[RMDB]
RNA sequence: GGGAACGACUCGAGUAGAGUCGAAAAGAAAGAAAGAAAGAACUCUGUAAAGUGAGGGAUUGCCUGGACCAGGUCGGCGGGCCUGCUCCAGUUUCCUUCGCUCUGCUUAACGGGCAGACCGCCACAAAAAACGCGUGGCUGUUCGCAGCCACGCGAACUGUAUGGUAAACUUCGGUUUACCAUACAGAAAAGAAACAACAACAACAAC
Reactivity to 2A3 in 0.01 (KOAc 150mM, MgCl2 10mM, bicine 150mM(pH8.5), 24C), signal-to-noise 2, nucleotides 027 to 156: g060a000a040a010g060a040a100a010g050a090a060a000g060a030a030c080u060c100u200g050u160a160a060a000g030u040g010a000g030g040g000a060u000u230g100c000c000u000g010g000a000c000c000a000g010g010u020c000g030g070c060g060g020g000c000c000u000g000c000u010c000c000a000g010u040u100u000c000c000u020u040c010g000c020u040c000u000g000c010u030u020a130a030c010g010g000g020c000a000g010a110c020c040g000c040c000a020c060a020a240a010a060a050a020c010g040c020g010u000g000g000c020u010g000u030u140c190g020c080a020g040c020c000a000c000g010c000g000a010a000

An RNA of 207 nucleotides, treated with 2A3 and read out base by base. 2A3 adducts were read by reverse transcription with SuperScript II with manganese.